An RNA of 207 nucleotides, treated with 2A3 and DMS and read out base by base.
RNA sequence: GGGAACGACUCGAGUAGAGUCGAAAAGGGGUCACAGCAGCGGAGAGACAUGCGUCGGGUACUGAAGCCUCCACGGUAUCUCUAGCGUGCGCAACAGCUCUCCGCAAUGCUGUGACGGAGGCACCCAAACCAGUUUGCGUUUCGACGCAAACUGGAAUGUAUUUAGGUAGUUCGCUACCUAAAUACAAAAAGAAACAACAACAACAAC
Reactivity to 2A3 in 0.01 (KOAc 150mM, MgCl2 10mM, bicine 150mM(pH8.5), 24C), signal-to-noise 4, nucleotides 027 to 156: g050g000g010g020u010c010a000c000a010g030c020a050g130c020g030g010a010g000a000g020a050c060a210u190g010c000g020u040c020g030g000g000u000a000c010u030g040a120a020g030c000c020u020c030c030a030c000g010g010u010a030u000c050u030c060u170a090g100c060g130u260g030c090g030c030a110a220c040a210g050c010u010c000u000c010c000g030c000a020a020u020g000c000u000g000u000g000a010c010g000g000a000g010g010c020a060c000c010c000a030a030a070c000c000a000g010u000u010u010g010c000g000u000u050u180c270g070a000c010g000c000a000a000a000c000u000g000g000a000a030
Reactivity to DMS in 0.01 (KOAc 150mM, MgCl2 10mM, bicine 150mM(pH8.5), 24C), signal-to-noise 2, nucleotides 027 to 156: g030g010g020g050u000c020a070c010a020g070c040a210g010c050g030g000a050g010a060g010a160c040a160u000g020c020g020u000c040g000g010g000u000a050c000u000g000a100a160g000c040c020u000c040c040a300c020g020g000u010a010u000c010u000c030u020a130g000c110g020u010g030c030g060c090a120a130c060a210g000c010u000c020u000c000c000g000c020a020a030u000g020c020u020g010u000g030a040c020g000g000a040g030g030c010a150c000c020c000a110a090a180c000c010a030g010u000u010u020g010c010g020u000u000u010c300g000a000c000g050c000a000a010a000c020u020g000g000a030a040
Reactivities are given for positions 27 through 156. The reactions ran in a buffer of 150 mM KOAc, 10 mM MgCl2 and 150 mM bicine (pH 8.5), at 24 C.